Description: The record gives the reactivity of an RNA of 177 nucleotides to 2A3 and DMS. Conditions: 150 mM KOAc, 10 mM MgCl2 and 150 mM bicine (pH 8.5), 24 C. 2A3 adducts were read by reverse transcription with SuperScript II with manganese. For 2A3, 3,641 sequencing reads were counted. Reactivities are given for positions 27 through 126. The data come from the RNA Mapping Database (RMDB), library M2PK50.
RNA sequence: GGGAACGACUCGAGUAGAGUCGAAAAUUCAGAGCCUUCGGGCUCUGAACCGUUUUCCUUGUUCCCAUUAUUGGUAACUCGGUAAUAAAAGGAAAGUUCCCGCAACUUGUUCGUUCGCGAACAAGAAUUAGGGAAGAAGAUUCGUCUUCUUCCCUAAAAAAGAAACAACAACAACAAC
Reactivity to 2A3 in 0.01 (KOAc 150mM, MgCl2 10mM, bicine 150mM(pH8.5), 24C), signal-to-noise 2, nucleotides 027 to 126: u010u010c000a000g010a000g000c010c010u060u080c260g120g030g000c000u000c000u000g000a000a000c000c010g000u030u000u010u020c010c000u020u060g010u010u050c000c000c000a010u060u080a030u020u050g000g000u020a030a020c010u010c110g000g030u030a030a040u090a100a300a030a020g000g000a050a000a000g000u000u010c000c020c010g020c020a030a100c010u010u010g000u010u000c000g030u020u030c250g020c010g140a000a000c000a010a000g000a020a100
Reactivity to DMS in 0.01 (KOAc 150mM, MgCl2 10mM, bicine 150mM(pH8.5), 24C), signal-to-noise 4, nucleotides 027 to 126: u010u000c000a010g010a010g010c000c000u000u020c230g050g020g010c000u000c000u000g000a000a020c080c080g000u000u000u000u000c000c000u000u000g000u000u000c000c000c010a110u000u000a020u000u000g000g000u000a120a120c300u020c010g000g000u000a010a010u000a050a090a030a020g000g000a020a020a050g010u000u000c000c000c000g020c270a100a150c000u000u000g000u000u000c000g020u000u010c160g010c020g000a010a010c000a000a000g010a100a120